The record gives the reactivity of an RNA of 177 nucleotides to 2A3 and DMS. Source: RMDB library RFMREP, as collected in RNAgym. Values cover nucleotides 27 to 126. DMS adducts were read by reverse transcription with MarathonRT. The RNA was probed in 150 mM KOAc, 10 mM MgCl2 and 150 mM bicine (pH 8.5) at 24 C.
RNA sequence: GGGAACGACUCGAGUAGAGUCGAAAACUGCCGGGCCUUGCCUUGACUGGGUUUCGGAGUCUCUUUAGACUUACGGACCCUAAAUUUGGCAGGGCGGACCGCUCUGCCAUUUUGUUUAUGUCGAAAGGAUUAUGCUAUUCUUCGGAAUAGCAUAAUCAAAAGAAACAACAACAACAAC
Reactivity to 2A3 in 0.01 (KOAc 150mM, MgCl2 10mM, bicine 150mM(pH8.5), 24C), signal-to-noise 2, nucleotides 027 to 126: c000u040g060c020c000g000g020g020c000c050u070u160g010c010c010u080u120g060a060c050u050g000g020g050u030u100u300c010g020g000a000g020u000c010u010c000u030u260u300a020g000a000c010u020u140a160c060g020g010a000c000c000c000u030a030a030a020u020u010u010g000g010c000a010g000g000g000c060g000g090a090c030c040g000c000u010c000u000g000c000c000a010u010u020u030u040g080u010u300u050a180u160g070u040c020g060a100a050a010g100
Reactivity to DMS in 0.01 (KOAc 150mM, MgCl2 10mM, bicine 150mM(pH8.5), 24C), signal-to-noise 3, nucleotides 027 to 126: c040u010g010c030c040g010g000g020c010c090u000u010g020c040c020u000u010g020a040c080u000g010g010g000u000u000u000c000g020g000a020g000u000c000u000c300u010u010u010a030g010a020c000u000u000a110c000g020g000a020c000c000c010u000a010a020a030u000u000u000g000g020c000a010g000g000g010c000g000g000a120c270c080g000c010u000c000u000g010c010c000a010u000u000u000u000g010u000u000u000a100u030g010u000c030g000a100a150a140g010